The record gives the reactivity of an RNA of 177 nucleotides to DMS and 2A3. The data come from the RNA Mapping Database (RMDB), library RFMREP. The DMS profile rests on 893 reads. Conditions: 150 mM KOAc, 10 mM MgCl2 and 150 mM bicine (pH 8.5), 24 C. In probing experiments dimethyl sulfate is read out at A N1 and C N3, which are open when not base-paired.
[RMDB]
RNA sequence: GGGAACGACUCGAGUAGAGUCGAAAAACACAACUUGUCUCCCAGCUGGUGUGAGGUUGGGCCAGGAUGAAACCCAAGGCUCUCCGAGGCUCCCCACCACACCCUGCUGCUGAAGACUACAUAACGCGUAAAAUUUAUGGUUCGCCAUAAAUUUUACAAAAGAAACAACAACAACAAC
Reactivity to DMS in 0.01 (KOAc 150mM, MgCl2 10mM, bicine 150mM(pH8.5), 24C), signal-to-noise 2, nucleotides 027 to 126: a050c050a050c120a060a090c100u000u000g020u000c030u010c020c050c020a040g000c020u020g010g040u010g020u000g010a030g000g020u010u010g010g000g040c010c010a200g010g000a060u010g010a050a100a090c060c060c140a100a140g020g050c130u000c020u000c010c030g000a160g000g030c040u000c050c160c010c060a040c050c010a020c000a020c010c010c130u000g020c020u000g000c160u000g000a010a040g000a040c030u000a090c210a110u010a090a150c200g010c220
Reactivity to 2A3 in 0.01 (KOAc 150mM, MgCl2 10mM, bicine 150mM(pH8.5), 24C), signal-to-noise 2, nucleotides 027 to 126: a000c080a010c020a050a100c060u050u120g010u000c010u000c010c010c000a000g000c010u010g000g010u080g000u000g060a060g000g010u070u050g040g000g000c020c000a000g020g010a010u170g040a130a080a060c060c080c050a100a100g080g000c010u000c020u000c010c050g090a300g000g000c030u060c000c020c010c000a040c030c010a000c000a000c010c010c020u050g000c000u010g010c020u010g060a060a000g000a010c000u080a010c070a130u150a140a080c070g040c020